Conditions: 150 mM KOAc, 10 mM MgCl2 and 150 mM bicine (pH 8.5), 24 C. The record gives the reactivity of an RNA of 177 nucleotides to DMS. High DMS reactivity at an A or C suggests that its Watson-Crick edge is free.

[RMDB]
RNA sequence: GGGAACGACUCGAGUAGAGUCGAAAAUCUCGCGGGUGCGCCGUCUCACUCACCUGCUGGUGCAUGUCGAGCCCUGUGAGGCACCCCCUCCUGUGGUGGCCACUCCUCGGCCCAGUGAGUAGUGGAGUGGCUUGUCAACGUUCGCGUUGACAAGCCAAAAAGAAACAACAACAACAAC
Reactivity to DMS in 0.01 (KOAc 150mM, MgCl2 10mM, bicine 150mM(pH8.5), 24C), signal-to-noise 1, nucleotides 027 to 126: u020c000u010c020g020c000g020g020g000u000g020c040g020c160c040g020u010c040u010c030a130c050u030c060a020c010c030u030g030c180u010g010g030u000g030c220a070u030g010u010c030g000a290g000c020c010c030u010g050u000g010a000g030g010c140a220c000c010c010c010c020u010c030c000u000g000u010g000g000u010g010g010c000c000a010c000u000c010c010u000c050g020g030c010c090c050a120g010u000g000a030g020u000a040g020u010g000g020a050g030